[RMDB]
RNA sequence: GGGAACGACUCGAGUAGAGUCGAAAAUGCUGUGGCCUCCCUUGUGGACCGGGGACCGUCUGGUCUUCGAUUCGCCCGUCCAGCGGCUGUUUCCCGAGAUCGUCGCGUGUCACUCCCUCCGGGAACAGUACGUUAAUGUAUUCGUACAUUAACGUACAAAAGAAACAACAACAACAAC
Reactivity to 2A3 in 0.01 (KOAc 150mM, MgCl2 10mM, bicine 150mM(pH8.5), 24C), signal-to-noise 9, nucleotides 027 to 126: u130g000c030u050g030u100g060g010c010c010u030c000c000c000u020u070g080u060g020g020a040c010c010g010g000g010g010a020c010c020g210u200c240u300g010g000u000c000u020u010c010g040a060u050u050c020g020c010c020c010g030u040c010c010a030g010c000g020g000c030u030g040u030u050u040c010c010c010g020a050g010a060u090c050g040u030c020g020c040g030u070g040u050c030a040c070u040c000c000c000u020c030c030g020g000g020a060a050c020a030
Reactivity to DMS in 0.01 (KOAc 150mM, MgCl2 10mM, bicine 150mM(pH8.5), 24C), signal-to-noise 7, nucleotides 027 to 126: u020g010c030u010g010u010g000g000c030c030u000c010c000c020u000u020g010u010g010g000a040c060c010g020g000g000g010a030c020c000g010u040c210u030g010g010u000c010u010u000c020g000a110u010u010c030g010c030c080c050g000u010c040c050a100g000c040g000g010c030u000g000u010u010u010c000c000c010g010a140g000a080u020c070g010u000c030g000c020g020u010g010u010c060a100c060u000c010c000c000u020c040c040g000g010g010a080a080c170a140